[RMDB]
Structure probing data (2A3) for a 177-nucleotide construct. The RNA was probed in 150 mM KOAc, 10 mM MgCl2 and 150 mM bicine (pH 8.5) at 24 C. The 2A3 profile rests on 628 reads.
RNA sequence: GGGAACGACUCGAGUAGAGUCGAAAACAAUUUGGACAACCUUUUCUAUAUUGCACAUGCAAAUGCAAUGGAUAUGAUGUCAAUUGAAGAGGAUAAGAAAUUCCAUGAAAUUCCAUUUUAACACCCACGGUAUCCCCUGGUUCGCCAGGGGAUACCGAAAAGAAACAACAACAACAAC
Reactivity to 2A3 in 0.01 (KOAc 150mM, MgCl2 10mM, bicine 150mM(pH8.5), 24C), signal-to-noise 2, nucleotides 027 to 126: c040a000a220u050u070u150g210g000a050c040a000a090c000c000u030u020u060u000c000u060a060u010a030u300u060g010c020a000c000a050u110g090c050a080a160a000u180g010c040a110a080u130g030g040a040u040a000u240g160a110u080g090u180c000a010a020u070u070g060a080a040g000a000g010g000a010u080a050a040g100a000a020a010u100u000c030c000a000u060g010a160a240a080u010u000c000c000a000u280u280u000u000a000a000c000a080c000c020c000a060